[RMDB]
Background
Structure probing data (2A3 and DMS) for a 207-nucleotide construct. DMS (dimethyl sulfate) methylates the pairing face of unpaired adenines and cytosines. The 2A3 profile rests on 2,967 reads.
RNA sequence: GGGAACGACUCGAGUAGAGUCGAAAAAAGUGAUUCGUCACUUCAGCACGCGUACUACUCUUGCAUUUGAGAAUGAUGGUGGAGGUUCUCCCAAAUAGGAGAACCGAUGAAACCAUAUUCGAGCAAGAGUAUCGCCCUCUCACAUGUUCGCAUGUAAGGUCUGAUAAUACUUCGGUAUUAUCAGACCAAAAGAAACAACAACAACAAC
Reactivity to 2A3 in 0.01 (KOAc 150mM, MgCl2 10mM, bicine 150mM(pH8.5), 24C), signal-to-noise 3, nucleotides 027 to 156: a000a000g020u030g000a060u090u150c230g040u020c130a010c000u060u030c040a040g100c090a070c070g010c010g020u120a130c050u000a000c010u040c000u000u010g030c040a220u090u160u300g190a140g000a040a020u120g160a010u000g150g010u000g010g000a000g000g000u000u000c000u070c000c000c020a070a260a110u300a120g000g000a000g000a000a000c000c010g010a010u000g000a000a000a000c000c000a000u000a000u000u000c020g020a020g000c000a010a000g000a000g000u000a000u000c000g000c000c000c010u000c010u020c010a030c010a040u060g060u090u090c200g050c110a020u130g040u170a160a080
Reactivity to DMS in 0.01 (KOAc 150mM, MgCl2 10mM, bicine 150mM(pH8.5), 24C), signal-to-noise 1, nucleotides 027 to 156: a030a010g010u000g000a030u000u000c160g030u000c010a010c020u000u000c050a110g000c080a090c080g030c050g010u000a120c060u000a040c020u000c010u000u000g040c000a300u000u000u000g030a190g010a010a030u000g030a010u010g000g010u010g020g000a080g030g020u000u000c010u010c000c020c030a010a080a230u020a080g000g050a020g010a030a000c000c000g030a030u000g020a140a090a160c010c010a010u000a030u000u000c000g000a220g000c000a010a010g000a000g000u000a010u010c010g010c000c000c060u000c030u030c050a120c060a090u000g030u000u000c090g020c030a060u000g000u030a160a300
Overview
DMS adducts were read by reverse transcription with MarathonRT. Values are in units of 0.01, from 0 to 300, in steps of 10. For DMS, 2,318 sequencing reads were counted. The RNA was probed in 150 mM KOAc, 10 mM MgCl2 and 150 mM bicine (pH 8.5) at 24 C.